[RMDB]
RNA sequence: GGGAACGACUCGAGUAGAGUCGAAAAGAUAUGGACCCGUUGCAAGUUGCUCGGAAACGAGGCAAUGAUGACCAACUGGGUCCUAAGUCAAAAGUAGCAUGCAUCUGUUCGCAGAUGCAUGCUACAACUAUUUACAGUGCUUCGGCACUGUAAAUAGAAAAGAAACAACAACAACAAC
Reactivity to DMS in 0.01 (KOAc 150mM, MgCl2 10mM, bicine 150mM(pH8.5), 24C), signal-to-noise 4, nucleotides 027 to 126: g020a050u000a300u000g010g000a010c000c000c000g030u000u000g010c020a040a120g030u000u000g010c000u000c000g010g000a090a120a180c020g010a030g000g010c000a000a020u000g000a070u010g000a140c300c000a000a020c000u010g040g000g010u010c000c000u010a000a080g020u000c030a090a080a090a140g000u000a000g010c010a000u000g010c000a010u000c000u000g000u000u010c210g040c010a000g000a000u000g000c000a000u000g010c000u000a000c000a020a110
Reactivity to 2A3 in 0.01 (KOAc 150mM, MgCl2 10mM, bicine 150mM(pH8.5), 24C), signal-to-noise 3, nucleotides 027 to 126: g040a020u050a030u100g000g000a000c000c000c000g020u000u010g030c090a270a270g000u000u010g010c020u030c020g010g030a040a090a080c040g010a120g130g000c010a010a000u100g060a300u090g020a030c040c030a050a020c210u260g010g020g000u020c000c000u010a030a000g020u020c050a030a020a060a160g000u010a000g000c020a000u020g000c010a000u020c030u010g090u120u120c300g030c190a000g000a010u000g000c000a010u010g010c000u000a000c000a010a000